[RMDB]
RNA sequence: GGGAACGACUCGAGUAGAGUCGAAAAGAUAUGGAGGUGCACGGAGCGAUAAGCGUUAUCGGAAACGAUGCGCUUUUGACGCUUCAUCAUGCCUCCUAAGUCAAAGGGUCAGCUUCGGCUGACCCAAGAGGUUUAACUGGUUCGCCAGUUAAACCUCAAAAGAAACAACAACAACAAC
Reactivity to DMS in 0.01 (KOAc 150mM, MgCl2 10mM, bicine 150mM(pH8.5), 24C), signal-to-noise 1, nucleotides 027 to 126: g010a010u000a280u000g000g010a010g000g040u000g010c250a140c220g010g000a030g030c000g000a080u000a030a050g010c000g010u000u010a000u030c000g000g000a110a020a120c040g000a000u000g010c000g010c000u000u000u000u000g010a110c060g000c000u020u010c010a030u010c190a090u000g010c020c060u040c000c000u000a000a110g000u000c030a060a090a130g000g000g000u000c000a010g000c000u000u000c300g010g000c000u000g000a000c030c000c010a000a000
Reactivity to 2A3 in 0.01 (KOAc 150mM, MgCl2 10mM, bicine 150mM(pH8.5), 24C), signal-to-noise 1, nucleotides 027 to 126: g050a000u000a060u090g000g000a000g020g040u050g040c110a080c120g060g010a020g000c070g060a230u010a140a010g000c020g060u150u300a000u040c000g000g000a040a000a040c000g000a010u020g000c040g020c000u080u000u020u110g110a030c000g030c020u050u000c000a030u100c010a010u190g030c000c000u050c000c000u000a060a000g020u010c040a040a020a110g000g010g020u000c000a020g000c000u030u140c230g140g040c000u020g000a000c000c000c000a000a000

The record gives the reactivity of an RNA of 177 nucleotides to DMS and 2A3. The 2A3 profile rests on 1,495 reads. Reactivities are rounded to 0.1 and cut off at 0 and 3. The DMS profile rests on 779 reads. Reactivities are given for positions 27 through 126. The RNA was probed in 150 mM KOAc, 10 mM MgCl2 and 150 mM bicine (pH 8.5) at 24 C. 2A3 adducts were read by reverse transcription with SuperScript II with manganese.